Structure probing data (DMS and 2A3) for a 177-nucleotide construct. The reactions ran in a buffer of 150 mM KOAc, 10 mM MgCl2 and 150 mM bicine (pH 8.5), at 24 C. For 2A3, 5,940 sequencing reads were counted. For DMS, 3,238 sequencing reads were counted.

RNA sequence: GGGAACGACUCGAGUAGAGUCGAAAAGAUAUGGACGUUUGUAGGGAGACCGUGUCGGAAACGACACCGGGUCGAAGAACUAUGACGUCCUAAGUCAAACGUAAUUUUCCUUCGGGAAAAUUACGAAGAAUUACAAAGUCUUCGGACUUUGUAAUUCAAAAGAAACAACAACAACAAC
Reactivity to DMS in 0.01 (KOAc 150mM, MgCl2 10mM, bicine 150mM(pH8.5), 24C), signal-to-noise 3, nucleotides 027 to 126: g010a030u000a200u020g000g000a030c010g020u000u010u000g040u000a000g010g010g040a300g020a000c000c010g020u000g020u000c000g000g000a030a040a100c000g010a000c000a000c150c200g040g030g020u010c020g000a120a150g000a150a200c000u000a010u000g000a020c010g010u000c010c000u000a000a070g000u000c020a100a150a290c020g010u010a000a000u000u000u000u000c000c000u010u010c250g030g000g000a000a000a000a000u000u000a000c010g000a060a060
Reactivity to 2A3 in 0.01 (KOAc 150mM, MgCl2 10mM, bicine 150mM(pH8.5), 24C), signal-to-noise 2, nucleotides 027 to 126: g000a000u040a040u100g000g000a000c000g030u010u250u300g050u100a030g030g070g090a170g010a050c000c020g000u000g000u000c020g000g020a040a010a010c000g000a000c000a010c040c100g300g010g000u020c010g040a200a040g080a040a000c010u010a010u040g000a000c000g000u000c010c000u010a020a010g020u000c020a080a060a150c030g000u000a000a000u000u020u000u000c000c000u030u040c200g010g010g000a030a000a000a000u000u000a010c020g000a020a040